[RMDB]
RNA sequence: GGGAACGACUCGAGUAGAGUCGAAAAUUGGGUCCUGCGCAAUGGGAAUUCAUGAACCAUGUCAGGUCCGGAAGGAAGCAGCAUUAAGUGAAACCUCUCAUGUGCCGCAGGUUGCCUUGGGCCGAGCUAACUGCUUAAGUAACGCUUAGGGUAGCGAUCUAUUCGCUAGGUUCGCCUAGCGAAUAGAAAAAGAAACAACAACAACAAC
Reactivity to DMS in 0.01 (KOAc 150mM, MgCl2 10mM, bicine 150mM(pH8.5), 24C), signal-to-noise 2, nucleotides 027 to 156: u000u000g080g060g030u010c000c010u000g020c100g010c070a040a090u010g000g010g060a020a300u000u000c020a020u010g000a190a080c070c130a070u000g010u000c040a260g000g010u000c010c050g000g020a060a070g040g010a030a070g040c000a200g010c020a070u000u000a070a300g000u030g010a060a030a070c050c130u010c000u000c010a100u010g010u010g040c050c030g000c000a010g030g040u000u000g010c000c060u010u000g040g040g010c000c030g000a300g000c010u010a040a070c100u000g040c140u000u000a020a070g010u000a030a120c190g000c000u000u000a070g040g000g000u000a100g030c040g020a140
Reactivity to 2A3 in 0.01 (KOAc 150mM, MgCl2 10mM, bicine 150mM(pH8.5), 24C), signal-to-noise 2, nucleotides 027 to 156: u140u030g020g000g030u050c020c000u000g010c010g000c020a010a010u020g000g000g010a030a040u040u000c010a020u100g010a060a060c130c010a040u000g040u040c010a010g020g020u000c010c000g040g050a100a060g010g000a010a000g010c000a000g000c000a010u040u010a100a020g000u010g010a010a020a020c020c000u000c000u010c020a010u060g070u060g300c060c050g000c010a020g010g000u020u170g010c000c000u010u030g010g000g000c020c000g030a020g000c030u090a020a110c020u110g020c030u240u140a060a040g010u040a000a080c060g010c080u010u040a060g010g000g090u050a020g030c010g030a000